[RMDB]
RNA sequence: GGGAACGACUCGAGUAGAGUCGAAAAGAUGGGUCCGAUGGAUUAAUGCGUCGCCUGCCAUUGGAUCCUGAUUGAUAGAUUGAGGGCGACGGUCGGAUCACUCGGUAAUUCGGUGCUCAACGAGUGAUCCGUGAUGAUAGUUAAGAAGAGCACCUAACCACUAUACGAUAUUCGUAUCGUAUAGUGGAAAAGAAACAACAACAACAAC
Reactivity to 2A3 in 0.01 (KOAc 150mM, MgCl2 10mM, bicine 150mM(pH8.5), 24C), signal-to-noise 8, nucleotides 027 to 156: g100a060u160g000g000g000u010c010c000g010a000u010g000g010a020u080u210a210a070u300g090c000g000u000c000g010c000c000u010g030c000c010a000u000u020g010g000a000u010c010c000u000g020a020u030u140g060a040u050a140g140a080u020u230g100a110g010g010g010c000g000a000c000g010g020u040c010g000g000a000u010c000a000c000u010c000g020g100u140a120a090u200u140c050g000g000u010g000c000u010c000a010a000c010g000a000g000u000g000a000u000c000c000g000u000g010a010u040g010a010u040a150g160u240u200a130a030g030a040a010g000a030g000c000a000c000c000u000a030a010
Reactivity to DMS in 0.01 (KOAc 150mM, MgCl2 10mM, bicine 150mM(pH8.5), 24C), signal-to-noise 1, nucleotides 027 to 156: g000a090u000g010g020g000u020c000c000g040a050u000g000g000a100u000u010a040a030u000g040c070g060u010c050g020c040c020u000g040c000c010a080u000u010g000g040a020u000c000c000u050g030a150u000u000g000a200u010a070g010a240u000u010g000a140g010g000g020c020g030a020c040g000g000u010c000g020g020a040u010c010a010c010u000c010g030g000u000a100a130u010u000c010g010g000u010g030c080u000c010a090a070c030g010a040g020u000g010a010u000c000c000g010u000g020a080u000g000a150u000a100g000u010u000a080a190g000a150a150g000a090g000c010a010c030c000u020a070a160

Structure probing data (2A3 and DMS) for a 207-nucleotide construct. The reactions ran in a buffer of 150 mM KOAc, 10 mM MgCl2 and 150 mM bicine (pH 8.5), at 24 C. Values cover nucleotides 27 to 156. Values are in units of 0.01, from 0 to 300, in steps of 10.